Structure probing data (DMS and 2A3) for a 170-nucleotide construct. The data come from the RNA Mapping Database (RMDB), library 15KLIB. The DMS profile rests on 55,780 reads. Conditions: 150 mM KOAc, 10 mM MgCl2 and 150 mM bicine (pH 8.5), 24 C.

[RMDB]
RNA sequence: GGGAACGACUCGAGUAGAGUCGAAAAAAGAAGUUAGAGCUUACCUAGGAAUCUCUUCUGCUUGUGACGGUCUUGCUUCAGCUUAUAGGGCGAAUUCCUUUGAUGUACCUACAUUCUGCGCAAACCGAAAGCAUCAUGUUCGCAUGAUGCAAAAGAAACAACAACAACAAC
Reactivity to DMS in 0.01 (KOAc 150mM, MgCl2 10mM, bicine 150mM(pH8.5), 24C), signal-to-noise 9, nucleotides 027 to 129: a090a080g010a070a010g030u030u020a070g020a060g000c060u010u010a150c070c050u000a100g010g010a040a020u000c000u000c040u010u000c040u030g030c100u000u000g040u020g040a110c070g020g000u020c070u010u000g040c030u020u040c030a030g000c030u000u000a070u040a010g010g000g000c080g030a030a070u020u010c060c130u060u000u040g010a060u020g020u030a060c050c030u000a050c110a070u000u000c040u000g020c300g000c050a030a060a070c050c050g000a080a080a110
Reactivity to 2A3 in 0.01 (KOAc 150mM, MgCl2 10mM, bicine 150mM(pH8.5), 24C), signal-to-noise 9, nucleotides 027 to 129: a000a000g120a020a000g020u120u170a020g000a010g050c040u070u050a110c010c020u040a040g040g070a090a060u050c020u010c000u070u010c020u040g060c050u090u080g040u070g060a020c020g000g000u020c040u070u040g010c000u090u120c010a010g000c000u050u030a040u060a050g010g010g010c040g070a100a110u100u100c030c000u100u050u140g090a080u100g040u100a160c000c000u010a000c000a050u020u030c010u010g020c030g000c030a020a020a020c020c010g080a060a050a010